An RNA of 177 nucleotides, treated with DMS and 2A3 and read out base by base. The reactions ran in a buffer of 150 mM KOAc, 10 mM MgCl2 and 150 mM bicine (pH 8.5), at 24 C. The data come from the RNA Mapping Database (RMDB), library TTRDEL.

RNA sequence: GGGAACGACUCGAGUAGAGUCGAAAAGAUAUGGAAUGAGAAAGGCGAGGAUCAUUGACUCGGAAACGAGUCUGAUGGGAGCCUGAUUUCCUAAGUCAAAACAGUGGUAACUUCGGUUACCACUGAACAAUAACCUCCAGUUCGCUGGAGGUUAUUGAAAAGAAACAACAACAACAAC
Reactivity to DMS in 0.01 (KOAc 150mM, MgCl2 10mM, bicine 150mM(pH8.5), 24C), signal-to-noise 6, nucleotides 027 to 126: g010a020u000a080u010g000g010a030a010u000g000a300g010a090a160a050g010g020c010g020a160g020g010a040u000c000a010u000u000g000a010c000u000c010g010g000a010a020a040c000g010a000g010u000c000u000g010a020u000g000g000g000a100g010c000c010u010g000a100u000u000u010c000c000u000a010a110g000u000c010a090a090a100a220c010a000g010u000g000g010u000a010a010c000u000u000c210g010g000u000u000a000c000c000a000c000u000g000a040a100
Reactivity to 2A3 in 0.01 (KOAc 150mM, MgCl2 10mM, bicine 150mM(pH8.5), 24C), signal-to-noise 2, nucleotides 027 to 126: g000a000u020a010u080g020g030a030a000u050g020a070g250a300a270a060g020g000c030g120a250g090g060a050u010c010a020u010u060g000a000c000u000c000g010g000a000a010a000c010g010a000g000u010c010u020g010a000u010g000g060g010a010g000c000c030u000g000a000u000u000u000c000c000u030a010a000g030u010c020a020a000a140a240c000a010g010u000g000g030u000a020a000c010u070u120c290g100g000u000u000a000c010c000a000c010u000g000a000a000